[RMDB]
RNA sequence: GGGAACGACUCGAGUAGAGUCGAAAAUGCCUGGUGGCGUUGGCAGCACAAAUAUGUGUUCCCCAAGCGUGCUGGCAUUGCACCAUUUUUCCAAUUGACCGUGGCCAGCAUGACGUUCUUCUAUCUGAAUCAGGGACAGUUUCGACUGUCCCUGAUUAAAAGAAACAACAACAACAAC
Reactivity to 2A3 in 0.01 (KOAc 150mM, MgCl2 10mM, bicine 150mM(pH8.5), 24C), signal-to-noise 2, nucleotides 027 to 126: u080g070c000c000u080g090g020u090g050g000c000g030u010u060g020g020c030a010g020c000a000c000a020a100a000u150a070u070g090u000g030u020u040c070c000c000c000a020a020g020c040g020u020g000c000u000g000g000c000a000u000u240g000c020a070c010c000a060u020u000u030u060u000c000c020a150a060u000u090g110a040c030c030g040u000g070g070c030c000a000g000c000a000u030g000a060c000g070u050u000c000u120u000c030u140a300u050c140u040g030
Reactivity to DMS in 0.01 (KOAc 150mM, MgCl2 10mM, bicine 150mM(pH8.5), 24C), signal-to-noise 3, nucleotides 027 to 126: u020g000c030c030u030g050g020u030g000g000c030g010u000u000g000g000c100a040g010c030a000c040a080a080a120u060a120u000g010u020g000u010u000c010c010c000c190a090a100g010c030g040u000g000c010u000g000g000c010a090u030u020g020c030a080c030c050a070u000u000u000u010u010c070c060a170a100u040u020g000a070c080c050g000u020g010g000c010c000a020g050c020a030u000g010a150c040g000u000u000c070u000u010c100u060a140u010c120u000g000
The data come from the RNA Mapping Database (RMDB), libraries RFM100 and RFMREP. This 177-nucleotide RNA was probed chemically with 2A3 and DMS.